[RMDB]
RNA sequence: GGGAACGACUCGAGUAGAGUCGAAAAAAAGUCACUAUGGAGUUUGAGAUUCUUUCUCACCCUGGUUGAAAUUCCAUUGGUCAACAAGGCAUAGAAGGAGAGAUACCGACACCUGAUCCGAUAUUAGUCGUAUGUUUGUAUUCGUACAAACAUACGAAAAAGAAACAACAACAACAAC
Reactivity to DMS in 0.01 (KOAc 150mM, MgCl2 10mM, bicine 150mM(pH8.5), 24C), signal-to-noise 5, nucleotides 027 to 126: a060a060a110g010u010c040a050c040u010a060u020g000g010a100g010u010u000u000g020a040g000a080u000u010c200u000u000u000c000u000c040a070c100c010c000u000g000g010u000u010g000a010a040a090u000u000c030c040a110u000u010g010g010u010c040a050a060c070a060a060g000g010c070a080u000a050g010a110a080g000g000a060g000a120g000a090u000a060c040c010g000a080c060a060c030c030u000g000a070u010c040c030g010a090u010a080u010u000a090g010
Reactivity to 2A3 in 0.01 (KOAc 150mM, MgCl2 10mM, bicine 150mM(pH8.5), 24C), signal-to-noise 4, nucleotides 027 to 126: a000a010a010g050u020c030a020c040u040a040u180g020g020a080g070u120u170u140g040a010g000a010u180u060c030u100u260u000c010u040c010a010c010c000c000u030g040g060u080u140g010a060a030a040u090u010c030c000a030u020u150g060g000u030c010a020a020c030a140a110g000g000c040a050u060a110g070a050a050g070g010a050g010a010g000a010u090a110c020c020g030a000c010a010c020c010u030g020a040u070c030c040g050a030u040a090u140u190a070g080